An RNA of 177 nucleotides, treated with 2A3 and DMS and read out base by base. The DMS profile rests on 2,941 reads. For DMS the reverse transcriptase was MarathonRT. Values are in units of 0.01, from 0 to 300, in steps of 10.
RNA sequence: GGGAACGACUCGAGUAGAGUCGAAAACGAUUAGCAUUCGUGCUAAUCGAAUCAGGUAGUACCUAUCUCUAUUACCUGUAGUGGCCAACGUCCGGACAGAGUAUCGAGUCCUGUUCGCAGGACUCAAUAUAGGAACUCUGUUCGCAGAGUUCCUAUAAAAAGAAACAACAACAACAAC
Reactivity to 2A3 in 0.01 (KOAc 150mM, MgCl2 10mM, bicine 150mM(pH8.5), 24C), signal-to-noise 2, nucleotides 027 to 126: c000g010a020u000u000a000g010c010a000u010u070c190g120u050g000c000u020a000a000u000c010g000a010a060u070c010a000g010g000u000a020g010u020a060c020c050u140a130u240c080u000c020u050a060u040u030a020c000c000u030g010u000a050g080u050g090g030c050c020a070a040c080g050u040c030c000g030g020a030c030a050g070a020g080u060a070u230c100g020a010g000u000c010c000u010g040u040u030c190g020c030a010g000g000a000c030u010c000a010a000
Reactivity to DMS in 0.01 (KOAc 150mM, MgCl2 10mM, bicine 150mM(pH8.5), 24C), signal-to-noise 3, nucleotides 027 to 126: c010g010a000u000u000a000g000c010a030u000u010c150g040u000g000c000u000a010a000u000c000g010a050a070u000c020a010g000g000u000a010g010u000a110c220c110u000a140u000c120u010c090u000a020u000u000a010c000c000u000g010u000a080g020u010g010g000c030c040a070a060c150g010u000c030c030g010g020a080c100a090g010a120g010u000a070u000c100g010a020g010u000c000c000u000g010u000u010c230g030c020a010g010g010a020c010u000c010a010a040

As a SHAPE reagent, 2A3 marks flexible, mostly unpaired nucleotides at the ribose 2'-OH.